[RMDB]
RNA sequence: GGGAACGACUCGAGUAGAGUCGAAAACGAUUAGCAUUCGUGCUAAUCGAAUCAGGAAGUACCUAUCUCUAUUACCUGUAGUGGCCAACGUCCGGACAGAGAAUCGAGUCCUGUUCGCAGGACUCAAAAGCACUAUAGUAUUCGUACUAUAGUGCUUAAAAGAAACAACAACAACAAC
Reactivity to 2A3 in 0.01 (KOAc 150mM, MgCl2 10mM, bicine 150mM(pH8.5), 24C), signal-to-noise 8, nucleotides 027 to 126: c010g000a000u000u000a000g010c000a010u020u050c210g100u060g000c000u000a000a000u000c000g010a000a070u090c020a010g050g070a090a050g050u070a070c010c010u050a090u090c030u000c010u040a100u140u130a130c010c010u040g020u070a060g050u070g090g020c040c030a090a040c070g040u020c020c020g020g030a030c030a030g100a010g060a070a090u170c110g000a010g000u000c000c000u000g020u020u030c200g010c040a000g000g000a000c000u000c000a010a010
Reactivity to DMS in 0.01 (KOAc 150mM, MgCl2 10mM, bicine 150mM(pH8.5), 24C), signal-to-noise 9, nucleotides 027 to 126: c010g000a010u000u000a010g000c000a030u000u010c190g020u000g010c000u000a000a000u000c000g010a050a070u010c090a070g000g000a110a090g010u010a090c050c030u000a100u010c030u000c020u000a080u000u000a090c050c030u000g010u000a080g010u010g010g000c040c040a060a090c160g010u000c030c030g010g010a080c120a060g000a100g000a070a090u010c150g000a020g000u000c000c010u000g000u000u010c150g020c010a010g000g000a010c000u000c000a020a040

About this RNA:
This 177-nucleotide RNA was probed chemically with 2A3 and DMS. For DMS the reverse transcriptase was MarathonRT. The DMS profile rests on 20,576 reads. It was measured as part of the RMDB library M2PK50.